[RMDB]
RNA sequence: GGGAACGACUCGAGUAGAGUCGAAAAGAUAUGGAUUUGAGGCAGAAGCCAUUCAGGGAGCCUUGCGUCUCGGAAACGAGACCAAGGCGACGAUCUGACGGUGGCUUCUGCCUCAAAUCCUAAGUCACCAACAUAUGUACUUCGGUACAUAUGUUGGAAAAGAAACAACAACAACAAC
Reactivity to DMS in 0.01 (KOAc 150mM, MgCl2 10mM, bicine 150mM(pH8.5), 24C), signal-to-noise 3, nucleotides 027 to 126: g020a020u020a300u010g010g000a000u000u010u000g010a010g000g010c000a030g020a050a000g030c010c000a020u000u000c020a000g000g000g000a040g010c000c000u000u000g000c300g000u000c000u000c010g000g010a130a110a220c010g000a000g020a010c010c020a020a000g000g020c010g000a020c240g000a040u000c010u000g010a030c300g000g000u000g010g000c000u000u000c000u000g020c000c000u000c000a000a000a000u010c010c000u000a000a020g000u000c030a160
The record gives the reactivity of an RNA of 177 nucleotides to DMS. Values cover nucleotides 27 to 126. The DMS profile rests on 1,927 reads. It was measured as part of the RMDB library TTRINS.